[RMDB]
RNA sequence: GGGAACGACUCGAGUAGAGUCGAAAACAUCUGUCUUCUGCCCACCGCCUGCAGGGAGUUGCUUGUGAGGGGAGGCAGAGGGGACGGCAAGUGAGGGCCAAUCCUUGUGUUGUCCUGAAGGGCCCCAACGGCUGUUAAUUUUCGAAUUAACAGCCGUAAAAGAAACAACAACAACAAC
Reactivity to DMS in 0.01 (KOAc 150mM, MgCl2 10mM, bicine 150mM(pH8.5), 24C), signal-to-noise 2, nucleotides 027 to 126: c080a120u000c010u010g010u000c000u010u000c010u010g020c000c000c050a190c010c090g010c010c030u020g000c060a050g000g000g000a170g050u010u020g060c030u010u000g020u010g000a070g030g000g000g000a250g000g000c000a010g010a050g000g020g020g010a030c010g000g000c060a030a060g010u000g000a030g070g000g000c140c160a090a140u010c040c030u010u000g000u000g010u000u000g000u010c000c020u000g010a100a110g010g000g000c060c010c010c100a130
Reactivity to 2A3 in 0.01 (KOAc 150mM, MgCl2 10mM, bicine 150mM(pH8.5), 24C), signal-to-noise 1, nucleotides 027 to 126: c010a070u040c020u020g060u040c020u010u020c020u120g070c030c030c060a300c120c030g180c000c000u080g000c010a010g000g110g090a230g140u300u170g130c000u030u070g040u070g180a060g030g040g010g000a000g000g090c020a000g010a000g040g010g020g010a010c020g000g000c000a010a050g060u040g210a070g020g040g060c070c030a010a120u090c070c020u030u030g030u010g010u090u060g010u000c020c010u020g060a040a040g020g030g010c000c010c000c010a000

Source: RMDB library OK2TRN, as collected in RNAgym. The record gives the reactivity of an RNA of 177 nucleotides to DMS and 2A3. The reactions ran in a buffer of 150 mM KOAc, 10 mM MgCl2 and 150 mM bicine (pH 8.5), at 24 C. Reactivities are given for positions 27 through 126. The DMS profile rests on 1,791 reads.